[RMDB]
Structure probing data (DMS) for a 177-nucleotide construct. The RNA was probed in 150 mM KOAc, 10 mM MgCl2 and 150 mM bicine (pH 8.5) at 24 C.
RNA sequence: GGGAACGACUCGAGUAGAGUCGAAAACGCAAGUCAAUAAUAAUCAAAUUGUGUUGUCCGCCAAGACCGAACUGGCCAAGGUUCAACAAAUGAUCUGAUCGCCUAAGGCCAAUGGUAUCAGACUGAAAAAAUUUAGGAGUUUCGACUCCUAAAUUUUAAAAGAAACAACAACAACAAC
Reactivity to DMS in 0.01 (KOAc 150mM, MgCl2 10mM, bicine 150mM(pH8.5), 24C), signal-to-noise 3, nucleotides 027 to 126: c030g020c060a010a050g000u010c120a050a050u000a130a090u000a210a050u010c120a090a090a140u000u000g010u010g000u010u000g020u020c040c080g000c070c060a090a140g000a040c090c040g020a120a070c100u000g000g020c020c020a080a170g000g010u000u000c070a050a060c230a070a030a130u020g000a070u000c040u000g020a040u000c120g020c000c010u010a100a120g000g000c050c080a030a060u000g000g010u000a040u010c060a050g000a080c070u010g000a000a050